Chemical mapping of a 207-nucleotide RNA with 2A3 and DMS. DMS adducts were read by reverse transcription with MarathonRT. For 2A3, 868 sequencing reads were counted. Values cover nucleotides 27 to 156.

[RMDB]
RNA sequence: GGGAACGACUCGAGUAGAGUCGAAAAUAGAAGCUGUAGCAAGUUAUCCAAAAGAUCUAAUUGAUGAAGGUGGCUUACACUAAACAACAGAUUUUCAAUGUAGACAAAACAAUCUUCUAUUAGAAGGUGUCAUCUAUGACUUACAUAGUUAAAGAGGUCAAACGAGUGUUUUCGAACACUCGUUUGAAAAAGAAACAACAACAACAAC
Reactivity to 2A3 in 0.01 (KOAc 150mM, MgCl2 10mM, bicine 150mM(pH8.5), 24C), signal-to-noise 2, nucleotides 027 to 156: u050a000g060a030a020g010c070u040g040u120a010g090c060a060a000g090u090u060a040u120c050c070a050a180a090a070g010a020u020c050u090a120a150u110u140g050a100u050g020a120a030g000g000u000g020g040c000u090u110a010c010a000c020u120a070a140a030c010a010a020c010a080g060a050u070u070u060u130c040a040a000u050g020u030a030g040a040c060a010a080a020a020c060a080a100u000c030u100u000c030u100a190u140u170a120g010a020a000g040g000u010g030u060c030a040u010c020u030a050u060g000a000c000u000u060a080c060a020u050a000g060u040u070a020a100a050g130a040g050g070
Reactivity to DMS in 0.01 (KOAc 150mM, MgCl2 10mM, bicine 150mM(pH8.5), 24C), signal-to-noise 1, nucleotides 027 to 156: u000a090g020a080a150g030c050u010g010u010a080g000c030a030a070g030u000u030a040u030c020c010a030a050a080a160g000a050u000c060u000a070a170u000u020g000a060u000g010a170a120g000g050u010g000g070c090u000u010a070c060a030c060u000a080a070a090c080a140a150c080a160g000a180u000u000u000u000c040a030a050u010g000u000a090g030a050c030a070a090a080a020c080a080a080u000c040u000u000c010u000a150u030u000a060g020a040a040g000g010u000g010u000c090a030u000c000u010a130u010g010a080c050u000u000a040c090a150u000a090g010u010u010a010a060a110g000a110g000g020